[RMDB]
Chemical mapping of a 177-nucleotide RNA with 2A3.
RNA sequence: GGGAACGACUCGAGUAGAGUCGAAAAUUCAAAACCAAUUCCAGUCUGAAGGGAGGAUUUACUGGAUUUCUUACCUUUAACAUCUUCAAACACAACUGUAAAUUGAUCAAUUGCCAUUCCUAAUUCAGAUCGGGACGGGGUUCGCCCCGUCCCGAUCAAAAGAAACAACAACAACAAC
Reactivity to 2A3 in 0.01 (KOAc 150mM, MgCl2 10mM, bicine 150mM(pH8.5), 24C), signal-to-noise 2, nucleotides 027 to 126: u230u210c050a100a000a020a020c050c000a050a000u030u030c020c000a020g150u000c130u080g060a080a030g030g000g010a000g130g000a000u000u060u060a010c020u000g000g270a200u120u050u140c050u220u230a300c140c000u280u220u010a070a030c030a000u040c000u070u120c000a000a120a000c000a000c000a300a060c000u000g010u120a000a000a100u000u000g030a030u090c000a000a060u130u000g000c020c000a000u000u070c000c000u100a100a010u300u000c050a000
The 2A3 profile rests on 393 reads.